About this RNA:
This 177-nucleotide RNA was probed chemically with 2A3 and DMS. Reactivities are given for positions 27 through 126. The 2A3 profile rests on 952 reads. The DMS profile rests on 1,626 reads. DMS adducts were read by reverse transcription with MarathonRT.

RNA sequence: GGGAACGACUCGAGUAGAGUCGAAAAGAAAAGAGGCGAAAAGCUGAAGAAAACGGCAAACGCCACAAACGUUGUGAAAAUAAAAGCGAAGAAACGCACUCGACACGGCGACCGAGUAAAAAGAAAAAUAUGGAUACCGAUUCGUCGGUAUCCAUAUAAAAGAAACAACAACAACAAC
Reactivity to 2A3 in 0.01 (KOAc 150mM, MgCl2 10mM, bicine 150mM(pH8.5), 24C), signal-to-noise 2, nucleotides 027 to 126: g060a000a190a030a000g160a070g000g000c000g050a040a000a040a040g000c070u050g010a080a050g150a000a110a000a000c040g000g000c000a000a100a000c000g000c020c000a060c010a060a190a000c020g020u030u020g000u010g130a080a120a000a000u260a070a060a020a000g010c010g030a040a020g060a150a090a000c030g010c000a010c050u020c010g000a010c000a000c110g120g010c040g060a080c010c010g000a000g060u140a050a090a050a000a000g190a050a060a060a080
Reactivity to DMS in 0.01 (KOAc 150mM, MgCl2 10mM, bicine 150mM(pH8.5), 24C), signal-to-noise 2, nucleotides 027 to 126: g060a100a040a100a140g000a050g030g040c000g000a110a070a130a170g000c000u000g000a070a090g000a130a100a080a130c060g000g000c020a020a170a210c000g000c020c010a090c240a130a080a070c160g010u020u000g010u000g000a000a020a080a090u020a010a010a060a040g010c000g000a050a150g030a040a100a100c010g010c010a050c060u000c010g010a050c020a060c070g000g050c020g000a080c080c000g010a140g040u030a020a050a040a060a030g010a020a040a010a040